[RMDB]
RNA sequence: GGGAACGACUCGAGUAGAGUCGAAAAGAUAUGGAUGUACCUCGCGAUAAGCUCAGUGUCGGAAACGACACGAGCUUUUGACGCGAGUGUACAUCCUAAGUCAAAACGUUCACGUUCGCGUGAACGAGGUUAGGAGGAUGUUCGCAUCCUCCUAACCAAAAGAAACAACAACAACAAC
Reactivity to DMS in 0.01 (KOAc 150mM, MgCl2 10mM, bicine 150mM(pH8.5), 24C), signal-to-noise 2, nucleotides 027 to 126: g010a060u000a300u020g000g010a010u000g000u000a000c030c010u000c020g010c000g020a170u000a050a030g000c000u000c010a110g020u000g010u000c000g010g010a070a060a180c000g030a000c000a010c000g000a010g000c000u000u000u010u000g000a120c090g030c000g010a040g000u000g010u000a010c000a000u000c000c000u000a000a080g010u000c000a100a090a140a210c020g000u000u000c010a000c000g010u000u010c280g010c030g010u000g020a010a000c010g000a020
Reactivity to 2A3 in 0.01 (KOAc 150mM, MgCl2 10mM, bicine 150mM(pH8.5), 24C), signal-to-noise 2, nucleotides 027 to 126: g020a030u070a030u080g010g000a000u000g000u000a020c000c000u010c000g020c020g100a100u050a300a000g000c030u000c110a170g010u010g000u010c010g020g000a070a060a050c000g010a000c000a000c000g010a000g010c060u010u010u000u040g120a070c090g000c020g000a010g000u020g000u020a000c000a000u000c000c000u000a010a010g020u000c010a010a020a100a170c030g000u020u000c000a010c020g010u040u040c300g000c010g180u030g020a000a010c010g020a120